[RMDB]
RNA sequence: GGGAACGACUCGAGUAGAGUCGAAAAAUGUCUGUUAGUCCUCCCAGUAUUCCCUGAGGGAAGCACCAUAUUUAGCAUCCCUGCUUCACAGAUGGGAAAUCGAGGCACGGGGAACAAAAAUGACUUGUCCUUGGUAGAGCCAGGAUUCUGUGCACAGUAUCAGUGAACUGUUCGCAGUUCACUGAUAAAAAGAAACAACAACAACAAC
Reactivity to 2A3 in 0.01 (KOAc 150mM, MgCl2 10mM, bicine 150mM(pH8.5), 24C), signal-to-noise 2, nucleotides 027 to 156: a010u050g060u020c040u010g080u090u100a070g010u140c000c010u010c000c030c010a030g020u050a150u050u050c020c050c000u000g010a070g150g000g000a030a000g000c000a000c130c080a070u200a230u170u180u280a120g030c030a060u040c000c000c000u000g010c010u040u030c070a110c040a190g020a020u040g000g020g030a000a010a050u090c060g020a120g000g000c010a000c040g000g000g020g040a070a080c100a020a030a040a030a060u200g030a100c000u020u050g010u050c010c050u000u110g100g020u050a080g060a040g150c020c010a010g070g040a060u150u030c010u000g050u020g100c050a010c010a070g030
Reactivity to DMS in 0.01 (KOAc 150mM, MgCl2 10mM, bicine 150mM(pH8.5), 24C), signal-to-noise 1, nucleotides 027 to 156: a050u010g000u000c080u020g050u000u000a140g000u000c010c010u000c030c000c000a170g000u040a060u010u000c000c020c000u000g000a300g020g000g000a080a030g050c050a110c010c000a090u000a110u000u010u000a190g000c140a220u000c020c000c020u000g010c050u000u010c040a140c000a090g000a090u020g030g050g030a050a100a150u000c020g010a100g090g020c040a110c060g040g000g020g000a080a150c000a050a090a030a150a120u070g010a050c030u000u000g010u020c020c070u000u000g000g030u000a090g050a110g020c020c000a090g020g000a220u000u010c020u000g000u000g030c060a020c110a110g010